[RMDB]
RNA sequence: GGGAACGACUCGAGUAGAGUCGAAAAGUCUAUUCUGCACAGGUAAUAAAAGCGUUUGCAGUAACCUGCUAGAUUAGAUCUGGACAGGGAGUUUGAGAUUCUCUUUACCAUGUCUUGAGAUCUCAUACCGUAAUCUAAGAUUCGUCUUAGAUUACGGAAAAGAAACAACAACAACAAC
Reactivity to DMS in 0.01 (KOAc 150mM, MgCl2 10mM, bicine 150mM(pH8.5), 24C), signal-to-noise 6, nucleotides 027 to 126: g000u010c020u000a090u000u010c000u010g020c110a140c060a050g010g010u000a090a140u010a090a100a120a180g000c040g000u000u020u000g020c020a070g020u000a110a110c010c000u010g010c060u010a020g010a030u000u000a070g000a300u010c040u010g010g010a100c030a050g000g010g010a090g000u000u000u000g010a020g000a050u010u010c010u000c000u000u000u000a090c030c120a120u000g010u000c050u000u000g000a050g000a040u000c000u000c020a050u000a110
Reactivity to 2A3 in 0.01 (KOAc 150mM, MgCl2 10mM, bicine 150mM(pH8.5), 24C), signal-to-noise 5, nucleotides 027 to 126: g010u000c030u030a110u140u030c010u020g020c020a020c020a050g040g080u110a110a090u090a190a300a080a040g030c110g130u060u170u160g000c010a010g030u040a050a100c000c000u000g000c010u020a000g000a020u070u060a040g070a180u000c010u040g020g020a070c010a020g020g060g020a090g030u040u080u060g030a010g000a060u300u020c010u000c000u020u040u010a070c080c080a130u190g030u060c040u050u040g010a020g000a010u000c010u000c010a010u030a040